[RMDB]
RNA sequence: GGGAACGACUCGAGUAGAGUCGAAAACCUAACUUUAGUGGGAUACGUUUCAACUUUCCGUCUGUAAGUUGAAAAAGAGAACAUCAGACUAGCGAUACAGAAUGCCUGUCACUCGGCAAGCUGUAAAGUGAAUCCUUAAAUGAGUUGACUAUGAACGCAACAAUGCGUAGUUCGCUACGCAUUGUUGAAAAGAAACAACAACAACAAC
Reactivity to 2A3 in 0.01 (KOAc 150mM, MgCl2 10mM, bicine 150mM(pH8.5), 24C), signal-to-noise 8, nucleotides 027 to 156: c010c000u040a070a130c070u170u180u230a180g060u260g060g060g010a040u030a060c010g000u000u000u010c000a000a000c000u010u000u010c010c020g000u000c000u000g010u000a000a000g000u000u010g000a010a000a000a010a000g070a020g020a090a040c040a080u060c000a000g000a000c000u010a010g010c000g010a010u000a010c000a000g030a100a070u030g000c000c000u020g000u010c010a000c010u000c000g000g000c000a000a020g010c000u000g000u020a010a010a000g000u000g010a020a030u110c040c090u150u250a040a030a050u140g010a010g050u150u090g070a000c010u020a080u250g090a120a040c110g000
Reactivity to DMS in 0.01 (KOAc 150mM, MgCl2 10mM, bicine 150mM(pH8.5), 24C), signal-to-noise 2, nucleotides 027 to 156: c010c000u020a050a100c070u000u000u010a120g010u010g000g010g010a100u000a150c060g020u000u000u000c000a000a020c010u000u000u000c030c070g000u000c040u000g010u000a050a050g000u000u000g010a020a010a050a100a080g000a170g000a090a080c090a080u010c030a080g010a020c010u000a130g000c040g000a300u000a020c000a050g010a050a040u000g070c010c000u000g030u010c040a040c040u000c080g030g000c030a020a140g010c020u000g010u010a020a020a300g000u000g010a160a030u010c080c060u000u020a060a080a070u000g000a090g000u000u000g030a080c060u000a060u020g000a060a030c130g000
An RNA of 207 nucleotides, treated with 2A3 and DMS and read out base by base. 2A3 adducts were read by reverse transcription with SuperScript II with manganese. For DMS, 2,978 sequencing reads were counted.